[RMDB]
An RNA of 177 nucleotides, treated with DMS and 2A3 and read out base by base. It was measured as part of the RMDB library RFMREP. The DMS profile rests on 3,204 reads.

RNA sequence: GGGAACGACUCGAGUAGAGUCGAAAAUACAAUGCUCCUUCGGGUAGCGUUGUAUUCAUUUGUGGGAAUUUGUUUUCAAGUUCCCCUAUUACUGUGAGCAAAUUAGAGUGUUCAAAGCAGACGAUGUCUAGAGGUUAUAGUUCGCUAUAACCUCUAGAAAAGAAACAACAACAACAAC
Reactivity to DMS in 0.01 (KOAc 150mM, MgCl2 10mM, bicine 150mM(pH8.5), 24C), signal-to-noise 3, nucleotides 027 to 126: u000a000c000a000a000u000g000c000u000c010c000u000u020c200g030g010g010u010a000g020c000g030u000u000g020u000a000u000u000c120a080u000u020u010g020u000g030g000g000a020a000u000u000u000g000u030u010u010u010c020a020a030g000u000u000c000c000c000c060u000a030u010u000a090c040u000g010u000g010a040g010c020a030a080a080u010u020a130g010a150g000u000g000u000u010c030a070a070a130g010c060a040g010a140c150g010a080u010g000u000
Reactivity to 2A3 in 0.01 (KOAc 150mM, MgCl2 10mM, bicine 150mM(pH8.5), 24C), signal-to-noise 5, nucleotides 027 to 126: u000a000c000a010a010u000g000c000u010c010c000u020u040c180g130g000g070u170a000g010c000g000u000u010g000u020a010u040u020c040a070u050u110u150g160u210g010g000g000a010a030u030u000u010g110u070u180u090u280c010a000a000g010u000u000c000c000c000c020u060a070u220u120a060c030u010g050u050g070a010g000c020a030a030a130u140u120a160g040a080g220u040g030u010u040c040a110a060a040g050c010a010g040a120c080g100a060u120g040u070

The reactions ran in a buffer of 150 mM KOAc, 10 mM MgCl2 and 150 mM bicine (pH 8.5), at 24 C.